[RMDB]
RNA sequence: GGGAACGACUCGAGUAGAGUCGAAAAGGGGAAAUGAUGGGUAAAGGGUACAACAUUUCCAUCAGAUAGGAAGGGAUAAGUUCAGGGGUCUACUGUACUCAGGGUGACUGUGGUUAGUAAGAAUGCGGUAUAGGAGUAGGUUCGCCUACUCCUAUACAAAAGAAACAACAACAACAAC
Reactivity to DMS in 0.01 (KOAc 150mM, MgCl2 10mM, bicine 150mM(pH8.5), 24C), signal-to-noise 8, nucleotides 027 to 126: g000g000g000g000a070a070a060u010g000a070u010g000g010g020u030a050a080a120g020g010g010u010a060c150a070a100c100a090u010u000u020c010c010a030u020c060a070g000a150u040a100g010g000a090a070g010g000g010a080u020a080a080g010u010u010c080a080g000g010g000g010u000c060u010a060c100u000g020u010a020c050u010c040a110g000g000g010u020g000a060c050u010g000u010g000g000u010u020a070g000u010a030a060g000a050a060u010g010c200g010
Reactivity to 2A3 in 0.01 (KOAc 150mM, MgCl2 10mM, bicine 150mM(pH8.5), 24C), signal-to-noise 9, nucleotides 027 to 126: g000g020g010g030a020a040a090u120g020a040u050g030g030g070u200a090a100a090g100g040g030u100a060c040a110a010c010a120u040u040u030c000c000a030u040c010a020g100a140u140a080g050g050a060a050g050g010g020a050u080a180a070g070u110u090c060a020g010g000g000g020u000c030u060a080c040u080g020u010a020c010u020c070a030g040g040g040u060g030a010c010u020g010u030g040g040u050u030a040g010u030a080a040g030a110a070u180g110c090g060